Record summary
The data come from the RNA Mapping Database (RMDB), library 15KLIB. The record gives the reactivity of an RNA of 170 nucleotides to DMS and 2A3. The reactions ran in a buffer of 150 mM KOAc, 10 mM MgCl2 and 150 mM bicine (pH 8.5), at 24 C. High 2A3 reactivity points to a flexible backbone, as in loops and unpaired stretches. Reactivities are given for positions 27 through 129.
[RMDB]
RNA sequence: GGGAACGACUCGAGUAGAGUCGAAAAAGUUUGGAGAGCACUCCGGGCCGAAUGGUCGAGUAGCACUCAGAGGGAGGAAUCCACACGGAGUAGAGCAGAGAAAUCACCUCCAGAGGACCCCUUCAGCAACCUGCCUCGUUCGCGAGGCAGAAAAGAAACAACAACAACAAC
Reactivity to DMS in 0.01 (KOAc 150mM, MgCl2 10mM, bicine 150mM(pH8.5), 24C), signal-to-noise 2, nucleotides 027 to 129: a070g000u050u050u050g000g040a020g000a110g000c100a050c060u020c040c190g050g120g050c000c000g040a180a080u070g030g080u020c020g000a000g000u040a070g010c080a070c070u030c050a100g000a000g010g010g010a080g040g000a030a110u020c010c000a040c160a100c150g000g000a010g000u010a120g020a070g020c180a100g010a040g000a070a070a020u040c000a120c270c040u030c000c000a080g010a120g030g000a000c120c000c020c030u010u070c050a070g010c000a050a120c110
Reactivity to 2A3 in 0.01 (KOAc 150mM, MgCl2 10mM, bicine 150mM(pH8.5), 24C), signal-to-noise 2, nucleotides 027 to 129: a030g030u030u050u120g040g000a010g000a000g010c010a020c010u000c000c000g000g000g000c000c070g120a150a200u300g000g000u020c020g000a020g000u060a000g000c000a020c040u010c020a010g000a000g010g000g000a300g010g020a040a140u060c010c000a020c010a010c150g000g000a000g000u080a030g000a020g010c120a030g010a000g130a070a130a060u050c020a020c010c000u000c000c000a000g000a020g050g000a030c020c000c000c000u000u070c000a040g030c010a030a020c030

For 2A3, 2,547 sequencing reads were counted.